[RMDB]
RNA sequence: GGGAACGACUCGAGUAGAGUCGAAAACAACUGUUAUCUUGCCACUGCAUUGUUAACACUCCAACAAAUAGAGUUGAAGUUUAAUCCACCUGCUCUACAAAGGGCUGGUCAAGCUGCUAACUUUUGUAAACGAGCUCCUUCGGGAGCUCGAAAAGAAACAACAACAACAAC
Reactivity to DMS in 0.01 (KOAc 150mM, MgCl2 10mM, bicine 150mM(pH8.5), 24C), signal-to-noise 2, nucleotides 027 to 129: c120a190a070c160u020g050u000u000a040u000c000u000u160g010c110c140a280c080u040g040c040a020u130u060g000u000u000a020a060c170a070c140u070c020c020a100a050c210a070a080a000u070a110g050a180g000u040u000g000a300a000g050u020u020u020a000a140u100c030c140a030c100c000u030g000c000u000c030u080a070c120a170a130a000g100g000g000c000u100g020g050u070c000a010a050g000c070u000g000c250u070a000a110c030u100u000u000u140g000u120a090a220a040
Reactivity to 2A3 in 0.01 (KOAc 150mM, MgCl2 10mM, bicine 150mM(pH8.5), 24C), signal-to-noise 2, nucleotides 027 to 129: c010a000a070c000u000g000u040u000a180u200c020u000u150g050c000c040a130c020u120g000c040a000u170u000g010u060u040a040a000c020a000c060u000c000c000a000a000c040a000a290a040u190a140g180a050g060u000u020g000a020a000g000u000u000u080a040a000u070c000c000a000c030c040u000g000c000u000c000u000a050c010a000a240a000g010g010g000c010u020g030g000u010c000a000a070g000c000u000g000c010u080a010a010c000u150u000u000u020g100u040a130a000a000
Source: RMDB library 15KLIB, as collected in RNAgym.
An RNA of 170 nucleotides, treated with DMS and 2A3 and read out base by base.
The reactions ran in a buffer of 150 mM KOAc, 10 mM MgCl2 and 150 mM bicine (pH 8.5), at 24 C.
The 2A3 profile rests on 1,825 reads.